[RMDB]
RNA sequence: GGGAACGACUCGAGUAGAGUCGAAAAAGCACGGUUUUUGAGGACGCAUUUUGUCCGUGCGGUAAUGCCCUCCUUUACACUUUCUCGCAUGGUGCGGGAGUGUGGAGAGGAAACAAAAGCUAGUCACGAUAGGCGGUUAACUUCGGUUAACCGCCAACAUUGGUGAUCAGUUCGCUGAUCACCAAUGAAAAGAAACAACAACAACAAC
Reactivity to 2A3 in 0.01 (KOAc 150mM, MgCl2 10mM, bicine 150mM(pH8.5), 24C), signal-to-noise 7, nucleotides 027 to 156: a000g010c000a010c000g000g010u000u000u000u000u000g050a050g000g040a010c040g020c120a130u010u010u010u000g000u000c000c000g000u000g000c020g030g050u170a060a040u230g030c010c000c000u030c010c000u030u090u060a010c010a000c000u070u190u050c020u020c000g040c020a090u260g290g040u280g150c000g000g000g010a010g000u010g000u010g010g000a050g010a020g010g030a020a020a000c010a000a010a000a000g070c040u100a030g010u000c010a000c020g060a090u120a070g000g000c000g010g000u000u000a000a000c000u030u050c150g010g000u000u000a000a000c010c000g000c000c000a000a000
Reactivity to DMS in 0.01 (KOAc 150mM, MgCl2 10mM, bicine 150mM(pH8.5), 24C), signal-to-noise 2, nucleotides 027 to 156: a100g020c000a030c020g010g000u000u000u000u000u000g010a080g020g000a040c060g010c080a130u000u000u000u000g030u010c000c000g020u000g010c000g030g010u000a040a060u000g030c000c010c000u000c020c000u000u000u000a050c010a030c010u000u000u000c000u000c010g010c020a300u010g040g040u000g050c000g040g000g000a030g020u010g020u000g010g000a030g010a100g000g030a090a050a030c030a020a030a060a060g010c050u010a130g000u000c050a060c100g020a160u010a150g010g050c000g000g010u000u000a000a020c000u000u000c300g050g010u000u000a010a010c000c000g010c000c000a000a020

Structure probing data (2A3 and DMS) for a 207-nucleotide construct. In probing experiments dimethyl sulfate is read out at A N1 and C N3, which are open when not base-paired. Conditions: 150 mM KOAc, 10 mM MgCl2 and 150 mM bicine (pH 8.5), 24 C. For DMS the reverse transcriptase was MarathonRT.